The data come from the RNA Mapping Database (RMDB), library OK2TRN. This 177-nucleotide RNA was probed chemically with 2A3 and DMS. For DMS the reverse transcriptase was MarathonRT. Reactivities are given for positions 27 through 126. The RNA was probed in 150 mM KOAc, 10 mM MgCl2 and 150 mM bicine (pH 8.5) at 24 C. For DMS, 9,597 sequencing reads were counted. The 2A3 profile rests on 11,697 reads.
RNA sequence: GGGAACGACUCGAGUAGAGUCGAAAAGCGCGGCCAGGCCUACUGGCGCGAUCGCGGCCGUACCGCGCAUAGCGGUACCACAUAGCUCGUACCGCAUGCGAGGCCUGCGCGCGCGCGCUGCAGGCCACAACUGCUUAGAGUUCGCUCUAAGCAGUUGAAAAGAAACAACAACAACAAC
Reactivity to 2A3 in 0.01 (KOAc 150mM, MgCl2 10mM, bicine 150mM(pH8.5), 24C), signal-to-noise 4, nucleotides 027 to 126: g010c020g000c050g050g040c020c020a040g000g020c020c020u100a110c090u130g040g000c010g010c010g010a050u150c070g010c030g060g010c010c010g030u090a130c040c050g050c000g010c040a000u010a020g000c000g010g000u000a000c000c020a040c010a230u300a060g040c070u040c120g000u000a000c000c000g000c010a000u010g010c020g020a030g000g010c000c040u120g000c170g010c030g030c000g000c000g000c020g010c000u030g010c030a040g010g080c010c040a030
Reactivity to DMS in 0.01 (KOAc 150mM, MgCl2 10mM, bicine 150mM(pH8.5), 24C), signal-to-noise 6, nucleotides 027 to 126: g000c030g020c040g010g010c030c040a080g010g010c010c020u010a070c090u000g030g010c010g020c000g000a030u000c070g010c050g010g020c050c070g020u000a120c090c060g000c010g010c030a020u000a110g030c000g000g000u000a010c000c090a080c100a190u010a130g020c170u010c260g000u000a020c000c000g020c010a030u000g010c010g000a030g000g010c300c010u000g010c110g000c020g000c040g000c050g000c000g010c020u000g030c070a060g020g020c020c050a210